This 177-nucleotide RNA was probed chemically with 2A3 and DMS. The 2A3 profile rests on 4,709 reads. For 2A3 the reverse transcriptase was SuperScript II with manganese. Values cover nucleotides 27 to 126. It was measured as part of the RMDB library OK2TST. The RNA was probed in 150 mM KOAc, 10 mM MgCl2 and 150 mM bicine (pH 8.5) at 24 C.
[RMDB]
RNA sequence: GGGAACGACUCGAGUAGAGUCGAAAAUGGAACCAAACCACAGGGAAGAGAAGGACUCUAACAGUUGGGGCUGCCCGAGAUGGGCAGAGCUGUCUGGGGAAGCUAGUGAGCUCACUGUCACAGGAGGAAUAGAACGACUAUUCGUAGUCGUUCUAUUAAAAGAAACAACAACAACAAC
Reactivity to 2A3 in 0.01 (KOAc 150mM, MgCl2 10mM, bicine 150mM(pH8.5), 24C), signal-to-noise 3, nucleotides 027 to 126: u040g030g020a020a050c010c000a070a040a010c040c020a010c050a050g060g020g030a060a010g030a030g040a100a030g060g010a030c010u000c020u050a070a020c010a020g040u080u080g050g020g050g010c000u010g000c000c000c010g140a140g070a150u280g020g000g000c000a000g000a010g010c010u030g030u040c010u040g000g000g000g040a020a020g010c030u080a020g060u020g120a010g010c010u050c010a050c050u060g040u100c030a040c020a080g020g060a020g030g060
Reactivity to DMS in 0.01 (KOAc 150mM, MgCl2 10mM, bicine 150mM(pH8.5), 24C), signal-to-noise 9, nucleotides 027 to 126: u010g010g000a100a140c050c040a050a100a130c070c040a070c110a060g010g000g010a090a070g000a060g010a090a070g000g000a110c090u000c040u000a070a080c060a030g010u010u010g010g010g000g010c010u000g000c010c010c000g000a120g010a120u010g010g000g000c010a020g000a050g010c040u000g010u000c050u000g010g010g000g000a080a060g010c060u000a060g010u010g010a100g010c040u000c060a060c060u000g000u000c070a070c100a090g000g010a070g010g010